RNA sequence: GGGAACGACUCGAGUAGAGUCGAAAAUCACAAAGCGGAUUUGGCUCGGUUGGGAGGGGUCCAGACCGAACCUCUGGCGUUCCUGUGUCCGAGACACAGAAUUCGCACCAUAAACAACGGGAGAUUCGGUGACUAUCAUGUUCGCAUGAUAGUCACCAAAAGAAACAACAACAACAAC
Reactivity to 2A3 in 0.01 (KOAc 150mM, MgCl2 10mM, bicine 150mM(pH8.5), 24C), signal-to-noise 5, nucleotides 027 to 126: u110c030a030c080a080a110a000g010c020g000g010a000u010u010u050g020g000c000u000c010g040g020u090u140g060g020g010a010g000g030g020g010u050c010c000a000g020a020c000c080g080a060a060c010c020u010c000u000g020g010c040g140u020u030c000c010u030g040u070g020u010c000c040g080a010g040a070c100a010c000a170g110a020a020u030u010c000g030c010a060c010c000a040u150a060a150a030c070a010a040c080g030g060g010a090g020a070u080u140c070
Reactivity to DMS in 0.01 (KOAc 150mM, MgCl2 10mM, bicine 150mM(pH8.5), 24C), signal-to-noise 3, nucleotides 027 to 126: u070c060a080c160a110a120a270g000c000g000g000a030u010u000u010g000g020c010u000c000g000g040u020u010g020g050g020a080g020g060g000g000u010c070c030a000g010a010c050c100g000a050a160c300c220u000c000u000g010g000c020g020u010u000c010c000u000g000u040g010u030c000c020g000a040g010a010c050a050c260a060g000a020a040u000u010c020g000c030a160c090c070a050u080a150a130a070c290a070a080c070g000g000g000a060g000a120u040u030c150